[RMDB]
RNA sequence: GGGAACGACUCGAGUAGAGUCGAAAAUUAUUGGUGUAAUGUUCUGGAUGGUCGGUUGGUUAGAUCGGCCAAUAUGUACUUUGGCUUGAUACCUGUGGAAGAGGUUGAAGCUCAGCCUUGUAAGACCCAGUUCAAGGUACUUCGGUACCUUGAACUGAAAAGAAACAACAACAACAAC
Reactivity to DMS in 0.01 (KOAc 150mM, MgCl2 10mM, bicine 150mM(pH8.5), 24C), signal-to-noise 2, nucleotides 027 to 126: u000u020a080u010u010g030g000u010g000u000a100a080u000g010u000u000c040u000g010g050a170u010g020g020u000c010g010g000u000u000g000g020u000u010a100g000a040u000c020g010g000c000c000a000a030u010a060u010g000u000a060c150u010u000u010g000g010c010u000u030g000a110u000a020c000c040u000g030u000g020g010a150a170g020a030g010g010u010u000g000a080a070g030c110u000c130a100g010c000c010u000u010g020u000a050a080g010a220c020c040
Reactivity to 2A3 in 0.01 (KOAc 150mM, MgCl2 10mM, bicine 150mM(pH8.5), 24C), signal-to-noise 1, nucleotides 027 to 126: u130u040a010u000u070g000g000u020g020u090a090a070u090g040u020u000c030u050g090g160a160u050g030g050u010c010g020g090u070u030g050g190u120u100a080g000a070u000c020g010g000c020c010a000a000u120a050u080g090u060a070c060u090u000u050g000g040c000u000u110g020a020u080a100c000c020u050g000u090g100g060a120a110g030a010g060g020u000u010g040a060a000g000c030u010c010a050g000c000c040u060u070g020u040a060a030g030a040c000c000
An RNA of 177 nucleotides, treated with DMS and 2A3 and read out base by base. It was measured as part of the RMDB library OK2TRN. The DMS profile rests on 1,784 reads. High DMS reactivity at an A or C suggests that its Watson-Crick edge is free. For 2A3 the reverse transcriptase was SuperScript II with manganese. The RNA was probed in 150 mM KOAc, 10 mM MgCl2 and 150 mM bicine (pH 8.5) at 24 C.